[RMDB]
RNA sequence: GGGAACGACUCGAGUAGAGUCGAAAACGCUGGGAGCUUGUCAGGACGGUCGCGGUAGGCGUUGAUCUACUGAAGCGCGCACGGUAGGGAGCCUACCGCGCUACGUCCUUGGAUUUAGCUCCUGUGCUGAAGCGCGCACGGCAACCGAAAGGUGCGACGGAUGUUAUGAGUUCGCUCAUAACAUCCGAAAAGAAACAACAACAACAAC
Reactivity to DMS in 0.01 (KOAc 150mM, MgCl2 10mM, bicine 150mM(pH8.5), 24C), signal-to-noise 1, nucleotides 027 to 156: c040g040c040u010g030g040g010a010g070c010u040u000g000u010c080a020g010g000a050c000g010g020u010c250g030c000g000g010u010a000g010g010c020g000u010u030g000a050u010c000u000a010c030u000g030a070a130g000c000g060c000g000c020a300c020g030g000u010a050g000g020g000a040g010c020c000u000a010c040c000g020c020g000c040u010a010c020g000u000c020c000u000u000g010g000a290u000u030u000a050g040c000u000c000c030u030g020u000g080c030u040g020a080a080g020c000g010c010g000c040a300c050g020g010c010a000a110c040c010g110a150a150a250g040g000u010g000c020g000a230
Reactivity to 2A3 in 0.01 (KOAc 150mM, MgCl2 10mM, bicine 150mM(pH8.5), 24C), signal-to-noise 2, nucleotides 027 to 156: c020g010c010u020g010g010g000a000g030c020u150u080g210u230c050a020g010g000a000c020g020g010u090c030g010c010g000g000u000a000g000g050c000g190u250u030g000a000u040c000u000a000c000u000g060a140a020g040c000g010c000g000c000a000c010g000g000u000a000g000g000g000a040g010c000c020u050a000c030c000g000c000g020c020u020a010c010g000u000c000c010u000u030g020g010a030u080u040u300a000g000c000u010c000c000u000g000u000g000c000u030g000a120a020g000c010g000c000g000c020a010c030g000g010c010a010a010c000c010g020a080a010a030g020g000u060g000c000g070a050